[RMDB]
RNA sequence: GGGAACGACUCGAGUAGAGUCGAAAAGAGCUCCAGGGGCAGCUGUUAACAUCUGGGCUGACAGUCUAGGCCAGCCUUGAGAAGAGUGUGGGAUCUCAGCCCCCAGUGACUCAGCUCUCUCAGGAAAACCUAUGGCAGUUUUCGAACUGCCAUAGGUAAAAGAAACAACAACAACAAC
Reactivity to 2A3 in 0.01 (KOAc 150mM, MgCl2 10mM, bicine 150mM(pH8.5), 24C), signal-to-noise 5, nucleotides 027 to 126: g050a010g010c050u030c040c020a030g000g000g010g010c040a080g020c050u010g040u090u110a050a050c020a090u050c030u090g030g010g040c010u000g020a030c040a030g070u060c100u180a050g060g040c030c010a030g030c000c000u070u120g040a060g040a200a040g010a050g020u220g040u090g100g080g080a190u040c010u010c050a040g010c010c000c000c000c000a020g020u030g100a060c010u000c040a020g000c010u020c000u000c000u000c030a010g110g000a030a100a000
Reactivity to DMS in 0.01 (KOAc 150mM, MgCl2 10mM, bicine 150mM(pH8.5), 24C), signal-to-noise 2, nucleotides 027 to 126: g010a100g010c040u030c010c040a150g000g000g000g020c050a100g000c030u020g000u000u030a040a060c100a130u010c100u020g000g000g000c010u000g000a050c050a090g040u010c140u030a060g010g040c050c010a120g030c000c000u000u010g000a030g000a070a120g000a050g000u010g010u020g020g010g000a150u010c040u010c080a050g010c010c030c010c020c030a090g000u040g000a080c060u000c050a040g020c010u000c040u000c020u000c000a130g010g010a100a080a120
Structure probing data (2A3 and DMS) for a 177-nucleotide construct. For DMS the reverse transcriptase was MarathonRT. For 2A3 the reverse transcriptase was SuperScript II with manganese. The reactions ran in a buffer of 150 mM KOAc, 10 mM MgCl2 and 150 mM bicine (pH 8.5), at 24 C. The 2A3 profile rests on 3,263 reads. It was measured as part of the RMDB library RFM100.